RNA sequence: GGGAACGACUCGAGUAGAGUCGAAAAGCAAAUUGGGUCGCCGGGCUAAAGGGCUCUGGUCUACAGAGUGGGAUCUGGCAUCCGCAGCCUCUAAAGUUUCUACUGAGCAAUCCAAAUAGCCUAUGUGAUCCUGUUAGGAUUUCGAUCCUAACAGGAUAAAAGAAACAACAACAACAAC
Reactivity to 2A3 in 0.01 (KOAc 150mM, MgCl2 10mM, bicine 150mM(pH8.5), 24C), signal-to-noise 2, nucleotides 027 to 126: g010c020a060a090a130u090u060g020g000g020u010c000g000c000c000g040g020g000c030u120a110a050a040g080g000g000c000u000c010u030g070g010u050c040u080a070c010a010g040a020g080u170g050g080g020a070u030c050u070g050g000c020a020u040c010c030g000c020a020g030c000c000u100c020u110a090a130a030g010u030u160u080c060u080a110c040u020g020a030g100c020a030a040u040c000c000a040a050a050u100a060g030c040c000u090a100u120g160u090g040
Reactivity to DMS in 0.01 (KOAc 150mM, MgCl2 10mM, bicine 150mM(pH8.5), 24C), signal-to-noise 3, nucleotides 027 to 126: g020c070a050a110a190u020u010g020g020g030u000c070g030c030c120g010g010g010c030u010a050a170a090g000g000g010c010u010c030u000g000g010u000c100u010a150c030a040g010a070g010u010g000g020g000a040u000c020u000g020g010c200a080u000c010c040g020c210a050g010c030c020u010c060u010a050a140a080g010u000u000u010c080u020a090c060u010g010a090g010c030a070a040u000c040c020a020a050a100u000a130g010c010c010u000a100u020g000u000g010